[RMDB]
RNA sequence: GGGAACGACUCGAGUAGAGUCGAAAACUCUGGCUUUUGCUAGUUUAUUUUUCAUCUCACAUUUCACAAGUCAACAUUAUUUGACAUAUUUCUCAUAUGAAUUGUUGCUUCUUGAUAUUCAAAUCAGAAAUAUCGCAGCUGAGAUAAUGUUUGUGAAGACUGAGUCAGGAUUCGUCCUGACUCAGUCAAAAGAAACAACAACAACAAC
Reactivity to 2A3 in 0.01 (KOAc 150mM, MgCl2 10mM, bicine 150mM(pH8.5), 24C), signal-to-noise 2, nucleotides 027 to 156: c010u000c000u010g040g040c070u060u110u230u300g040c000u010a010g030u040u050u100a250u090u110u000u060u180c140a180u040c090u060c040a080c030a060u030u140u080c020a040c020a040a100g040u110c040a050a030c000a040u050u050a010u050u110u140g030a030c040a010u090a020u010u090u030c050u000c030a060u050a050u220g090a070a070u120u050g040u030u030g010c030u110u140c010u090u120g060a010u030a010u050u110c130a100a200a140u080c020a000g110a040a050a010u080a050u060c050g030c050a010g020c020u070g080a020g000a140u010a040a000u020g060u010u060u010g050u010g020a110a090

This 207-nucleotide RNA was probed chemically with 2A3. Values cover nucleotides 27 to 156. Conditions: 150 mM KOAc, 10 mM MgCl2 and 150 mM bicine (pH 8.5), 24 C.